[RMDB]
RNA sequence: GGGAACGACUCGAGUAGAGUCGAAAAGUCUUUGUCAAUUGAGGAGUUUGCUGACGUAGUAAAGGAACAAGUCUCAGACUUGCUUGUUAAAUUACUGCGUGGAAUGCCGAUUCCAGAUUUUGAUUUACUAAUAACCUAUGUUCGCAUAGGUUAUUAGAAAAGAAACAACAACAACAAC
Reactivity to DMS in 0.01 (KOAc 150mM, MgCl2 10mM, bicine 150mM(pH8.5), 24C), signal-to-noise 6, nucleotides 027 to 126: g010u000c020u000u000u010g010u000c010a010a010u010u010g000a300g000g000a020g010u000u000u000g010c000u000g010a030c010g010u000a010g010u000a000a020a100g010g020a030a020c000a010a010g000u000c110u000c180a120g010a050c100u000u000g000c010u000u000g010u000u010a040a070a100u000u000a000c010u000g000c000g020u000g010g010a070a040u000g010c010c070g000a020u000u000c010c000a050g000a170u000u000u000u000g000a030u000u000u010a170
Reactivity to 2A3 in 0.01 (KOAc 150mM, MgCl2 10mM, bicine 150mM(pH8.5), 24C), signal-to-noise 5, nucleotides 027 to 126: g010u000c020u080u150u100g020u010c010a010a020u000u030g000a020g000g000a000g010u000u020u030g000c010u030g030a000c000g000u000a000g000u000a010a030a050g090g050a030a000c000a010a010g020u010c040u020c110a050g050a150c010u030u050g010c010u010u020g010u030u060a070a100a030u020u010a000c000u000g000c020g020u020g020g180a110a030u050g000c000c020g000a000u010u000c000c020a060g070a300u000u010u010u010g010a010u060u080u080a070